[RMDB]
The record gives the reactivity of an RNA of 207 nucleotides to 2A3. The RNA was probed in 150 mM KOAc, 10 mM MgCl2 and 150 mM bicine (pH 8.5) at 24 C. The data come from the RNA Mapping Database (RMDB), library RNAMAK.

RNA sequence: GGGAACGACUCGAGUAGAGUCGAAAAGGGGUCUUGCUUGUCAGCUGUGUUCCCGCUCUUGGAUUUAUGGCUGAAGCCUCCACGGCCAUUGUCAGAGCGCACACAGCUUGGAUUUAGCAAGACGGAGGCACCCAAAAGCUACGGUUCGCCGUAGCAAGUUCCCUCUCUUGUUCGCAAGAGAGGGAACAAAAGAAACAACAACAACAAC
Reactivity to 2A3 in 0.01 (KOAc 150mM, MgCl2 10mM, bicine 150mM(pH8.5), 24C), signal-to-noise 3, nucleotides 027 to 156: g070g000g020g010u000c010u000u010g000c010u020u030g070u020c030a030g000c010u000g000u000g020u060u110c000c030c000g010c000u020c030u080u180g300g000a110u300u300u050a010u090g000g010c010u030g040a140a090g080c000c030u000c040c040a070c030g010g000c010c000a010u010u020g060u040c040a040g020a000g000c000g020c010a000c000a000c000a000g000c000u000u030g020g000a030u220u230u160a000g000c000a000a000g000a000c000g000g000a000g010g050c010a050c000c000c010a000a160a000a040g020c000u000a000c000g000g050u050u170c260g020c040c000g000u000a000g000c000a000a010

2A3 adducts were read by reverse transcription with SuperScript II with manganese.